[RMDB]
RNA sequence: GGGAACGACUCGAGUAGAGUCGAAAAUUGGAUCUGGAAACUCUUUUCAAAUACCGGAUGAGAUUCGAAGUGCGUGUAACAAAGUAUUAGAUAGUGAUAACGGAAUAGACUUUCUGAGAUUUGUUUUGUUAAACAAUAGAUGGAUAAUGGAAGACGCGGUACAGUAGCUUUUCGAAGCUACUGUACCAAAAGAAACAACAACAACAAC
Reactivity to DMS in 0.01 (KOAc 150mM, MgCl2 10mM, bicine 150mM(pH8.5), 24C), signal-to-noise 2, nucleotides 027 to 156: u010u000g000g000a070u010c020u010g040g010a140a100a120c050u010c020u010u000u010u000c010a070a090a080u010a130c010c030g040g030a120u010g010a110g000a160u000u010c040g010a090a100g000u010g000c020g090u000g030u010a130a080c040a050a060a110g010u000a090u020u010a050g010a140u000a110g030u000g020a160u010a100a300c100g010g000a050a080u000a120g000a050c010u000u010u000c050u010g010a080g000a150u000u000u000g000u000u000u000u010g000u020u000a060a050a070c030a040a040u010a120g000a070u000g010g030a110u000a040a130u010g000g000a090a080g000a070c100g030c100
Reactivity to 2A3 in 0.01 (KOAc 150mM, MgCl2 10mM, bicine 150mM(pH8.5), 24C), signal-to-noise 2, nucleotides 027 to 156: u020u060g010g030a020u020c020u030g030g050a090a120a060c020u040c030u240u110u190u130c070a100a090a000u040a060c020c030g030g030a070u090g060a040g010a050u150u090c030g050a060a000g010u010g090c040g020u050g030u050a050a070c080a060a080a050g000u020a080u090u030a000g020a050u040a020g010u020g050a060u020a110a020c040g030g070a010a030u050a070g070a030c050u020u060u000c030u100g070a080g010a190u090u020u020g030u030u050u020u000g060u010u080a100a080a010c020a050a030u030a060g040a040u090g020g000a020u050a120a040u160g030g000a010a050g020a030c030g010c040